[RMDB]
RNA sequence: GGGAACGACUCGAGUAGAGUCGAAAAUCCAUGUCCUUCGGGACAUGGAAAAAAAGCGUACUACAAAGAGGGGUAGGUCACCGUCCCAAAUAGGACGGGACCUAUAAUCCUACCCACCUUUGUAUCGCAAAAAUGUCUGGUAUUCGUACCAGACAAAUAGAGUAUAGUGAUUCGUCACUAUACUCUAAAAAGAAACAACAACAACAAC
Reactivity to DMS in 0.01 (KOAc 150mM, MgCl2 10mM, bicine 150mM(pH8.5), 24C), signal-to-noise 2, nucleotides 027 to 156: u010c000c000a020u020g010u010c000c000u000u020c300g060g050g000a000c000a000u000g020g000a000a000a030a050a030a070a100g010c030g010u000a040c140u020a030c020a030a030a020g030a060g030g020g060g000u000a010g020g010u000c120a120c000c020g030u000c000c000c020a060a140a230u010a050g000g020a020c010g030g020g000a050c070c010u000a010u000a080a070u000c010c020u000a030c020c000c010a030c010c000u000u000u000g000u000a010u000c040g010c000a000a090a040a100a120u010g010u020c010u010g000g000u000a050u010u000c300g000u000a050c000c000a010g010a000c010a000a030a100
Reactivity to 2A3 in 0.01 (KOAc 150mM, MgCl2 10mM, bicine 150mM(pH8.5), 24C), signal-to-noise 3, nucleotides 027 to 156: u030c000c000a000u010g000u000c000c030u020u080c280g070g000g000a010c000a000u020g000g150a120a010a020a000a000a010a000g020c020g020u050a070c030u010a000c020a000a000a000g040a070g020g020g000g000u020a010g000g010u040c070a040c300c000g000u000c000c020c020a200a300a090u230a050g000g000a000c010g000g020g000a000c010c010u000a000u010a000a000u010c000c000u010a010c000c000c000a150c020c000u020u000u010g020u040a050u300c040g000c050a130a000a000a020a000u030g000u000c000u000g000g000u000a020u010u090c180g010u010a020c010c000a000g000a000c000a000a000a000